[RMDB]
RNA sequence: GGGAACGACUCGAGUAGAGUCGAAAAGAUAUGGACCAUGCUAAUACAUACACAGCGUUGAAAUGAUAGGCUUAUCGGAAACGAUAAGCCUAUCAUGGAGCUGGUAUGGAUAACAUGGUCCUAAGUCCAAGUUAUCUAACUUCGGUUAGAUAACUUGAAAAGAAACAACAACAACAAC
Reactivity to DMS in 0.01 (KOAc 150mM, MgCl2 10mM, bicine 150mM(pH8.5), 24C), signal-to-noise 6, nucleotides 027 to 126: g000a110u010a300u000g010g010a020c000c000a010u000g010c020u000a170a090u020a160c000a010u000a010c000a140c000a010g030c010g010u000u020g020a160a140a010u000g000a010u000a000g000g000c000u000u000a000u000c010g010g000a130a080a250c000g010a010u000a000a000g010c010c000u000a000u000c000a000u000g000g000a060g020c000u000g000g010u000a000u000g000g010a070u000a070a100c000a010u000g000g000u000c000c000u000a010a080g010u010c040
Reactivity to 2A3 in 0.01 (KOAc 150mM, MgCl2 10mM, bicine 150mM(pH8.5), 24C), signal-to-noise 5, nucleotides 027 to 126: g060a030u120a080u180g000g000a000c000c000a010u000g030c010u080a160a080u280a230c010a010u030a000c220a010c000a300g010c020g280u300u060g020a080a090a030u010g000a000u000a010g010g000c000u010u000a000u000c020g050g020a100a090a060c020g000a000u010a010a000g000c000c000u000a000u000c000a000u000g010g010a000g000c000u000g000g000u000a000u010g010g000a010u010a030a010c000a000u000g000g000u000c000c000u010a010a000g000u000c020